[RMDB]
Source: RMDB library OK2TRN, as collected in RNAgym. Chemical mapping of a 177-nucleotide RNA with 2A3 and DMS. 2A3 is a SHAPE reagent: it acylates the 2'-hydroxyl of flexible nucleotides of all four kinds. Values cover nucleotides 27 to 126. The DMS profile rests on 5,913 reads. The 2A3 profile rests on 3,392 reads.

RNA sequence: GGGAACGACUCGAGUAGAGUCGAAAAGCACCGGCGACGCGGAUCCGUUCGAAGCGCGCCAGUUGCUGCGGGUCGCCGUUGAUCUCUUCGCGCAGCUCGGUGCCGCGGUAGCCGAUCUCCUCGGCAAUACUACUACCGAGUUCGCUCGGUAGUAGUAAAAAGAAACAACAACAACAAC
Reactivity to 2A3 in 0.01 (KOAc 150mM, MgCl2 10mM, bicine 150mM(pH8.5), 24C), signal-to-noise 2, nucleotides 027 to 126: g040c020a010c020c000g000g020c010g020a060c000g000c000g060g020a090u020c040c040g020u040u080c080g130a150a030g030c010g010c010g020c020c010a030g040u080u130g070c050u060g000c030g020g080g020u220c100g030c180c010g020u000u090g080a150u050c040u030c020u160u090c030g000c010g010c000a050g010c020u060c080g010g000u060g090c010c010g010c010g020g070u120a020g020c000c000g020a030u010c030u010c060c000u000c000g010g020c010a040a050
Reactivity to DMS in 0.01 (KOAc 150mM, MgCl2 10mM, bicine 150mM(pH8.5), 24C), signal-to-noise 5, nucleotides 027 to 126: g020c060a050c040c010g040g000c000g010a120c020g030c040g010g010a100u010c070c050g020u000u010c070g010a160a120g010c030g020c040g020c140c270a060g010u010u000g030c040u000g000c020g000g010g020u010c110g020c070c040g010u000u000g000a060u010c030u010c080u010u000c030g020c020g030c100a100g000c030u000c060g020g010u000g020c030c020g020c050g000g010u010a170g010c010c010g000a050u000c060u010c070c050u000c040g000g010c040a140a140